[RMDB]
An RNA of 177 nucleotides, treated with DMS and 2A3 and read out base by base.
For 2A3 the reverse transcriptase was SuperScript II with manganese.
RNA sequence: GGGAACGACUCGAGUAGAGUCGAAAAGUUAACCACGCACUGCGUGCAUUAUUAGCCCGCUUCUUGCGCCGCAGCCUGCCGCAGAUGGUGGUGCUGUCUAAUCUGGAAAUCGGCGACAAUCGCCAAAUCGCAAAAGAGAAUUCGUUCUCUUUUGCGAAAAAGAAACAACAACAACAAC
Reactivity to DMS in 0.01 (KOAc 150mM, MgCl2 10mM, bicine 150mM(pH8.5), 24C), signal-to-noise 5, nucleotides 027 to 126: g010u000u010a120a090c090c000a020c010g040c080a050c090u010g000c020g010u020g030c050a050u000u010a130u010u000a200g030c010c150c000g010c020u000u010c190u000u010g000c030g020c130c180g010c030a100g000c280c190u000g000c010c010g010c050a030g010a070u010g010g010u000g000g010u000g010c050u000g020u000c090u020a060a100u010c080u010g000g010a030a110a110u010c140g010g000c000g020a170c160a140a130u010c020g010c000c020a030a050a100
Reactivity to 2A3 in 0.01 (KOAc 150mM, MgCl2 10mM, bicine 150mM(pH8.5), 24C), signal-to-noise 5, nucleotides 027 to 126: g030u050u080a070a030c010c000a000c020g080c020a070c050u070g000c000g100u160g020c040a020u050u200a060u050u130a170g000c000c020c000g000c000u080u110c100u120u250g030c030g000c040c040g000c010a000g050c000c020u020g000c000c010g000c010a020g050a170u080g020g000u010g000g030u030g000c000u010g010u020c040u110a110a190u050c050u080g000g100a090a100a090u140c080g010g000c010g030a050c110a080a180u170c030g000c000c000a040a020a040